Chemical mapping of a 177-nucleotide RNA with 2A3 and DMS. DMS adducts were read by reverse transcription with MarathonRT. The DMS profile rests on 6,367 reads. Values cover nucleotides 27 to 126. The reactions ran in a buffer of 150 mM KOAc, 10 mM MgCl2 and 150 mM bicine (pH 8.5), at 24 C. The 2A3 profile rests on 3,805 reads.

[RMDB]
RNA sequence: GGGAACGACUCGAGUAGAGUCGAAAACACAUGCCAUCAUAUCGGAUAAGAACUCUUAACUCUGAUGGCUUUCGAGUUAUGUGGUGCAUUGAAGCUCUCCCUUCAAUUCAACGUACCGUUCCGUCAAUAUAGUUGGGAGAUUCGUCUCCCAACUAUAAAAAGAAACAACAACAACAAC
Reactivity to 2A3 in 0.01 (KOAc 150mM, MgCl2 10mM, bicine 150mM(pH8.5), 24C), signal-to-noise 3, nucleotides 027 to 126: c080a000c000a080u140g000c030c000a000u020c010a010u060a060u220c080g080g010a050u070a100a100g080a260a180c030u050c020u240u030a060a030c010u000c040u100g000a010u000g020g010c000u000u020u030c010g010a000g000u060u050a070u140g080u100g050g010u020g000c020a020u000u040g010a020a010g000c020u000c040u070c130c010c040u020u040c020a010a040u060u000c010a030a000c000g010u020a010c000c020g000u010u000c020c000g120u120c070a100a030
Reactivity to DMS in 0.01 (KOAc 150mM, MgCl2 10mM, bicine 150mM(pH8.5), 24C), signal-to-noise 6, nucleotides 027 to 126: c120a120c170a080u000g010c000c010a000u000c010a030u000a110u000c230g010g010a130u010a050a050g010a190a140c300u000c000u000u000a020a050c040u010c090u000g010a020u000g000g000c030u000u000u010c070g000a050g000u000u010a030u010g010u000g010g000u000g000c040a050u000u000g000a030a020g000c080u000c060u000c050c060c000u000u000c090a030a070u000u000c040a020a020c030g000u000a010c030c010g000u000u000c010c000g000u000c070a090a140